Record summary
This 177-nucleotide RNA was probed chemically with 2A3. It was measured as part of the RMDB library 15KREP. High 2A3 reactivity points to a flexible backbone, as in loops and unpaired stretches.
RNA sequence: GGGAACGACUCGAGUAGAGUCGAAAAUCUCACUGGCUUAGGUGAGUCCUUUAAGAAAGUUGCAACCAUACCGUAUAAGGUUUGCAACUCUGUUAAGGAUACUCUGGCUUAUUAUGCUCACAGCGUGGGAUUCCGUAGAGUUCGCUCUACGGAAUCCAAAAGAAACAACAACAACAAC
Reactivity to 2A3 in 0.01 (KOAc 150mM, MgCl2 10mM, bicine 150mM(pH8.5), 24C), signal-to-noise 1, nucleotides 027 to 126: u000c000u020c000a010c000u050g010g050c020u060u300a050g020g040u130g060a040g050u000c010c020u020u030u000a030a050g000a010a110a000g000u000u000g010c000a010a010c010c020a040u080a090c000c060g100u170a100u070a240a040g020g020u060u030u080g020c000a010a010c010u020c000u000g100u040u050a000a000g020g000a010u040a040c000u000c020u030g000g000c030u000u000a060u100u060a020u160g040c020u070c010a100c040a070g010c080g010u120g030